Source information: An RNA of 207 nucleotides, treated with DMS and 2A3 and read out base by base. The reactions ran in a buffer of 150 mM KOAc, 10 mM MgCl2 and 150 mM bicine (pH 8.5), at 24 C. Source: RMDB library OK3TST, as collected in RNAgym. For 2A3, 2,096 sequencing reads were counted.
RNA sequence: GGGAACGACUCGAGUAGAGUCGAAAAUACGAGGCUGGACAGGGAAGUAGCGGCUCCCCGCAAAGAACAGAGGUGCAGUCCCAGGAAGACAGCAGAGCAUGGCCUCCUUUCUUUUCAUGGAAACUUUAUUUUGGCCAUUUAGUGAGGACCAAACAAAGAUUACCUGGUAUUUCGAUACCAGGUAAUCAAAAGAAACAACAACAACAAC
Reactivity to DMS in 0.01 (KOAc 150mM, MgCl2 10mM, bicine 150mM(pH8.5), 24C), signal-to-noise 2, nucleotides 027 to 156: u000a070c080g000a080g030g010c020u050g020g060a120c040a130g030g020g040a030a080g000u000a100g040c070g000g080c030u000c030c010c020c050g050c120a080a070a100g000a050a090c060a100g000a070g030g030u000g000c020a100g030u000c040c010c010a250g020g000a120a060g010a070c040a100g040c050a080g010a120g010c080a080u000g010g040c000c010u030c110c020u000u000u000c010u000u010u000u000c020a080u000g020g000a100a060a100c080u000u000u000a100u040u020u020u000g020g000c020c000a090u000u000u000a140g020u000g020a120g040g030a070c020c020a020a060a090c110a030a050a210
Reactivity to 2A3 in 0.01 (KOAc 150mM, MgCl2 10mM, bicine 150mM(pH8.5), 24C), signal-to-noise 3, nucleotides 027 to 156: u160a030c010g010a030g010g010c010u000g010g010a030c010a060g030g000g030a020a060g020u090a030g010c000g020g020c020u020c040c030c020c030g040c070a050a090a030g030a080a020c070a060g010a020g060g030u110g000c030a000g020u060c020c000c000a010g070g010a010a010g040a010c030a010g020c040a000g010a010g020c070a060u040g030g000c000c000u040c030c000u040u060u040c010u050u160u080u100c050a060u040g040g000a070a030a040c020u110u140u130a110u130u200u090u020g030g000c000c000a030u050u070u080a100g010u050g060a030g040g010a040c030c030a070a030a020c040a000a060a090
The DMS profile rests on 3,001 reads.